[RMDB]
Chemical mapping of a 177-nucleotide RNA with DMS and 2A3. The DMS profile rests on 2,850 reads. DMS adducts were read by reverse transcription with MarathonRT. The RNA was probed in 150 mM KOAc, 10 mM MgCl2 and 150 mM bicine (pH 8.5) at 24 C. Reactivities are given for positions 27 through 126.
RNA sequence: GGGAACGACUCGAGUAGAGUCGAAAAGGUCUUUCACUGCAUUCAGUUGAUUUGGACGACAUUCCAGACGCAAUGAGCCCAAUGAUGGGUCGAUCUGAUAGCAAUGCAGUACUUUCAGGUGGACACAUCGUGGGUAAUCGUUCGCGAUUACCCACGAAAAAGAAACAACAACAACAAC
Reactivity to DMS in 0.01 (KOAc 150mM, MgCl2 10mM, bicine 150mM(pH8.5), 24C), signal-to-noise 3, nucleotides 027 to 126: g000g000u000c020u000u000u000c020a030c030u000g010c150a140u000u010c120a070g020u000u000g020a110u010u000u000g000g020a070c080g000a110c230a160u000u000c020c020a150g000a070c040g040c090a040a030u010g010a090g000c020c010c010a080a050u000g000a040u000g010g010g010u000c000g000a030u000c000u010g000a020u010a010g030c090a090a080u000g020c180a050g020u010a070c020u000u010u000c000a030g000g010u000g000g010a000c010a010c020a010
Reactivity to 2A3 in 0.01 (KOAc 150mM, MgCl2 10mM, bicine 150mM(pH8.5), 24C), signal-to-noise 2, nucleotides 027 to 126: g040g020u000c000u000u190u090c050a000c030u020g040c020a210u030u300c060a050g110u100u090g120a150u110u100u090g060g020a010c000g020a040c080a030u050u020c040c030a010g030a050c050g000c070a040a110u070g000a040g100c000c000c000a030a130u150g010a030u030g000g030g000u010c000g030a020u000c000u000g010a000u020a000g000c020a040a100u160g120c020a050g040u040a000c000u020u070u060c010a000g000g050u010g080g000a000c000a000c000a040